RNA sequence: GGGAACGACUCGAGUAGAGUCGAAAAACGGAUUACGAUCCGACUGGAAAGGAAGAAGCAUUCUUUCAUUGGUUGGUGUGUAUUGCCUUGUCAACCAAUAAGAGGAUGCCAUUUAUCCUUUUCUGAAAUAUAUAGUACGAUUCGUCGUACUAUAUAUAAAAGAAACAACAACAACAAC
Reactivity to 2A3 in 0.01 (KOAc 150mM, MgCl2 10mM, bicine 150mM(pH8.5), 24C), signal-to-noise 9, nucleotides 027 to 126: a000c020g000g010a020u060u090a070c190g020a020u000c010c020g050a060c040u040g010g020a010a000a010g010g010a010a040g020a040a000g040c000a000u000u000c000u010u020u010c010a010u000u000g010g010u010u000g000g020u040g020u020g050u130a230u210u300g100c030c030u050u110g030u020c000a000a000c000c000a000a000u020a020a010g010a000g000g000a000u000g000c000c000a010u050u060u030a120u010c000c000u000u000u010u000c010u010g010a010a090
Reactivity to DMS in 0.01 (KOAc 150mM, MgCl2 10mM, bicine 150mM(pH8.5), 24C), signal-to-noise 9, nucleotides 027 to 126: a150c010g000g010a010u000u010a090c190g020a080u000c000c000g010a300c050u010g010g000a010a010a010g000g010a030a300g010a110a250g000c010a010u000u000c000u000u000u000c050a020u000u000g000g010u000u000g000g000u000g010u010g010u020a120u030u020g010c150c100u010u010g010u000c010a010a010c010c000a010a010u000a030a010g000a000g000g000a000u000g010c010c070a050u010u010u020a120u010c000c000u000u000u000u000c000u010g000a090a090